[RMDB]
RNA sequence: GGGAACGACUCGAGUAGAGUCGAAAAGCAGCCUUUCGAGGCUGCCAGUCCUAAGUCACCGUUUCGAAGAAAGGUGGAGCAUCGAUCGUAGUCGGAAACGACUACGGGAGCUCCAUACUCUUGCGGUGAUAUGGAAGGUGAGCAACUUCGGUUGCUCUUCCUCACUUAUGUUCGCAUAAGUGAGGAAAAAAGAAACAACAACAACAAC
Reactivity to 2A3 in 0.01 (KOAc 150mM, MgCl2 10mM, bicine 150mM(pH8.5), 24C), signal-to-noise 3, nucleotides 027 to 156: g020c010a000g000c000c020u050u090u170c300g140a050g010g020c000u000g010c000c010a010g090u000c000c000u050a120a070g000u000c010a010c000c010g020u080u270u300c240g120a020a000g030a010a130a000g080g000u000g000g000a010g000c020a210u200c030g140a030u070c010g010u000a010g010u000c000g010g020a050a060a090c000g010a000c000u000a000c000g000g010g000a000g000c000u000c000c010a000u010a020c010u000c000u000u010g000c000g000g000u000g000a020u020a030u060g120g010a030a090g000g080u120g020a000g000c000a000a000c010u070u120c250g120g000u020u000g000c000u010c010
Reactivity to DMS in 0.01 (KOAc 150mM, MgCl2 10mM, bicine 150mM(pH8.5), 24C), signal-to-noise 3, nucleotides 027 to 156: g030c000a030g020c010c000u000u000u010c300g010a030g060g070c000u000g020c030c000a040g020u000c000c000u000a080a290g010u000c020a020c000c000g000u000u020u000c130g020a080a060g010a060a090a060g050g030u000g000g010a020g030c000a220u000c140g030a120u010c000g010u000a000g010u010c000g020g010a200a170a280c020g010a030c000u000a010c010g000g000g000a090g000c000u000c010c000a030u000a000c010u000c010u000u000g010c000g010g020u000g010a020u000a100u000g000g010a080a080g020g000u010g000a060g020c010a020a020c010u000u010c280g070g010u000u000g000c000u000c010